[RMDB]
The record gives the reactivity of an RNA of 177 nucleotides to DMS and 2A3. The reactions ran in a buffer of 150 mM KOAc, 10 mM MgCl2 and 150 mM bicine (pH 8.5), at 24 C. It was measured as part of the RMDB library OK2TRN. For DMS, 4,730 sequencing reads were counted.

RNA sequence: GGGAACGACUCGAGUAGAGUCGAAAACAAAGAAUAGAACAAUUGUGUUAAGAGAUAUCCUUGUUUCCUGGUUGGAAACAAUUUAUUCUGACAACCAGACAGAGAUAAACGUGAACGAGUGGCUCCGUCAUAGAGGGGGAUUCGUCCCCCUCUAUGAAAAAGAAACAACAACAACAAC
Reactivity to DMS in 0.01 (KOAc 150mM, MgCl2 10mM, bicine 150mM(pH8.5), 24C), signal-to-noise 5, nucleotides 027 to 126: c050a070a100a120g010a090a090u000a080g010a100a090c090a110a110u010u000g000u010g020u000u010a070a110g000a110g010a100u000a040u000c040c070u000u000g010u000u000u000c050c010u000g030g010u000u000g010g000a060a040a040c070a040a020u000u010u000a070u010u000c040u000g000a200c070a040a060c050c050a060g010a090c080a050g000a080g000a040u000a030a080a060c090g000u000g000a050a110c050g000a030g010u000g010g010c030u000c010c040g010
Reactivity to 2A3 in 0.01 (KOAc 150mM, MgCl2 10mM, bicine 150mM(pH8.5), 24C), signal-to-noise 2, nucleotides 027 to 126: c020a000a080a060g100a130a110u200a130g110a100a030c050a080a160u200u160g000u010g040u090u080a080a040g040a000g020a090u020a020u150c010c010u020u050g050u020u010u110c010c010u080g180g030u100u060g050g030a020a070a020c010a010a000u030u020u060a100u120u020c040u000g050a020c000a030a000c010c000a000g040a050c000a020g070a020g030a060u030a070a160a000c060g030u040g100a010a000c040g010a020g000u010g000g020c050u020c030c020g030